Structure probing data (DMS and 2A3) for a 207-nucleotide construct.
RNA sequence: GGGAACGACUCGAGUAGAGUCGAAAACUGGUGCGAUGUGCACAACAACGCAUUCUAAUCUCGCUUAGCUCACUGCAGUAGGUACAACACAUUACCACAAUGUUGUUUAACAGGCCAUAAUUAAAGGUGCUCCAGCCAAAACUCAUCUCAGGGAUAAUACUUGGUGCAUUUUCGAAUGCACCAAGUAAAAAGAAACAACAACAACAAC
Reactivity to DMS in 0.01 (KOAc 150mM, MgCl2 10mM, bicine 150mM(pH8.5), 24C), signal-to-noise 1, nucleotides 027 to 156: c050u000g090g030u030g040c030g000a040u050g050u020g040c170a110c050a160a090c050a110a040c010g030c030a050u010u000c050u010a080a160u010c020u000c030g000c110u000u000a080g000c020u000c040a070c070u000g010c000a080g030u010a060g020g000u020a080c100a080a070c030a020c070a120u000u000a090c140c040a080c110a050a100u000g000u000u000g020u030u010u000a080a130c050a110g000g040c010c010a100u000a040a100u000u020a090a120a100g030g080u000g060c020u000c020c020a070g060c010c030a030a020a150a080c080u000c040a080u000c050u000c040a110g020g010g000a120u000a060a180
Reactivity to 2A3 in 0.01 (KOAc 150mM, MgCl2 10mM, bicine 150mM(pH8.5), 24C), signal-to-noise 2, nucleotides 027 to 156: c040u070g000g010u010g030c030g040a080u030g090u050g070c060a000c020a150a050c020a020a010c040g010c010a010u060u150c110u100a060a160u020c020u000c060g010c040u030u100a010g010c010u020c030a080c070u080g020c020a020g030u150a050g030g010u070a010c040a100a040c020a030c010a060u040u040a090c040c070a060c070a070a040u040g020u100u000g000u020u100u060a110a050c070a050g000g020c050c020a080u080a260a090u150u130a090a060a030g000g000u040g020c020u000c020c030a030g060c000c010a020a060a070a090c060u030c030a060u000c040u000c030a050g020g000g110a010u080a130a020

Reactivities are given for positions 27 through 156.
The data come from the RNA Mapping Database (RMDB), library OK3TST.
The reactions ran in a buffer of 150 mM KOAc, 10 mM MgCl2 and 150 mM bicine (pH 8.5), at 24 C.
The DMS profile rests on 1,619 reads.